[RMDB]
RNA sequence: GGGAACGACUCGAGUAGAGUCGAAAAGAUAUGGAUUAUGCAAGCCUGAUAUCGGAAACGAUAUUAAAGGUGAUGACCAUACUGUCCUAAGUCAAAAGCUGAUGCAACGUUCGCGUUGCAUCAGCAACUAGGCAUAAAACUUCGGUUUUAUGCCUAGAAAAGAAACAACAACAACAAC
Reactivity to 2A3 in 0.01 (KOAc 150mM, MgCl2 10mM, bicine 150mM(pH8.5), 24C), signal-to-noise 3, nucleotides 027 to 126: g030a000u040a000u030g030g040a120u040u150a060u300g140c070a100a020g020c000c000u040g020a000u010a000u020c030g010g040a030a070a040c010g000a000u010a020u050u160a300a220a020g000g040u070g040a080u190g020a010c020c010a020u010a020c020u060g020u040c000c000u100a190a080g190u240c150a030a050a040a060g020c000u010g010a000u000g010c010a000a010c020g070u050u130c300g000c030g060u000u000g000c000a000u000c020a000g000c000a000a010
Reactivity to DMS in 0.01 (KOAc 150mM, MgCl2 10mM, bicine 150mM(pH8.5), 24C), signal-to-noise 4, nucleotides 027 to 126: g000a100u000a020u010g010g010a150u000u000a030u010g010c090a130a300g020c010c000u000g000a020u000a000u000c010g010g000a090a120a180c010g010a010u000a000u000u010a050a070a030g020g020u000g010a090u000g000a060c040c000a000u000a020c060u000g000u000c000c000u000a040a140g010u000c180a070a050a120a120g020c000u020g000a010u000g020c010a010a010c000g000u010u010c240g020c000g000u000u010g010c000a000u000c000a000g010c000a010a010
Notes:
Structure probing data (2A3 and DMS) for a 177-nucleotide construct. The 2A3 profile rests on 3,187 reads. It was measured as part of the RMDB library TTRDEL. The reactions ran in a buffer of 150 mM KOAc, 10 mM MgCl2 and 150 mM bicine (pH 8.5), at 24 C.